[RMDB]
RNA sequence: GGGAACGACUCGAGUAGAGUCGAAAAGUCGAUAGAAGACAAAGGCACUUUCGGUCUGGAUCAUGGAUUCAUGGUCUACUGACUUGGACCCGAAUUGACGAGCGAAUUGACCUCAAAUCAAUCAUCACACGUAAGGGGAGUUCGCUCCCCUUACGUGAAAAGAAACAACAACAACAAC
Reactivity to DMS in 0.01 (KOAc 150mM, MgCl2 10mM, bicine 150mM(pH8.5), 24C), signal-to-noise 2, nucleotides 027 to 126: g000u010c000g010a170u020a100g020a110a210g000a080c130a090a100a090g000g020c120a110c060u000u000u000c090g030g030u000c000u030g000g000a030u010c020a050u000g000g020a150u010u000c010a010u000g000g000u000c000u000a030c090u000g030a000c030u000u000g020g010a080c030c000c000g010a120a110u000u010g000a110c090g000a040g040c080g000a030a030u000u000g010a110c110c040u000c040a020a050a220u000c030a040a040u000c060a080u010c130a210
Reactivity to 2A3 in 0.01 (KOAc 150mM, MgCl2 10mM, bicine 150mM(pH8.5), 24C), signal-to-noise 2, nucleotides 027 to 126: g000u010c000g020a090u110a230g160a140a000g040a010c050a080a110a030g090g010c050a050c040u060u050u090c130g010g000u000c010u040g000g030a010u030c020a030u020g220g080a300u300u300c030a000u060g070g000u000c010u020a050c050u080g000a000c000u070u110g030g030a030c000c020c000g010a010a020u070u070g080a080c080g000a010g130c070g020a080a060u030u140g050a090c020c040u100c010a080a040a090u040c000a050a040u100c070a030u080c010a010
Conditions: 150 mM KOAc, 10 mM MgCl2 and 150 mM bicine (pH 8.5), 24 C. Chemical mapping of a 177-nucleotide RNA with DMS and 2A3. 2A3 adducts were read by reverse transcription with SuperScript II with manganese. It was measured as part of the RMDB library OK2TST. The 2A3 profile rests on 1,183 reads.